This 207-nucleotide RNA was probed chemically with 2A3. For 2A3, 521 sequencing reads were counted. Reactivities are given for positions 27 through 156.
[RMDB]
RNA sequence: GGGAACGACUCGAGUAGAGUCGAAAACGAGUGGAUCGAAGAGGACUGGUUCAACGCUGCUGACGCGCCGGUCGUGUACCUGCUCGAUCUGGGCGGCGCUACCGGUGGUGACUACACCCUGUUGGUCGGCGGCAAGUCCACCGGCGACAUCGCCUACCCUUCAAGUGACAUUCGUGUCACUUGAAGGAAAAGAAACAACAACAACAAC
Reactivity to 2A3 in 0.01 (KOAc 150mM, MgCl2 10mM, bicine 150mM(pH8.5), 24C), signal-to-noise 1, nucleotides 027 to 156: c000g000a010g130u030g030g020a010u110c100g000a170a020g010a130g100g050a050c050u010g050g010u200u060c070a010a000c080g000c020u060g070c000u010g000a000c010g000c030g000c110c000g000g000u000c000g000u010g020u110a230c040c090u190g000c000u020c010g170a270u140c190u270g000g000g000c000g000g000c010g000c030u000a040c000c000g000g000u000g010g010u040g000a030c040u180a060c040a060c040c070c060u070g180u240u210g210g000u000c020g000g000c000g000g040c050a020a050g010u000c000c000a030c070c000g040g000c000g030a060c060a090u140c040g000c060c000u050a040c020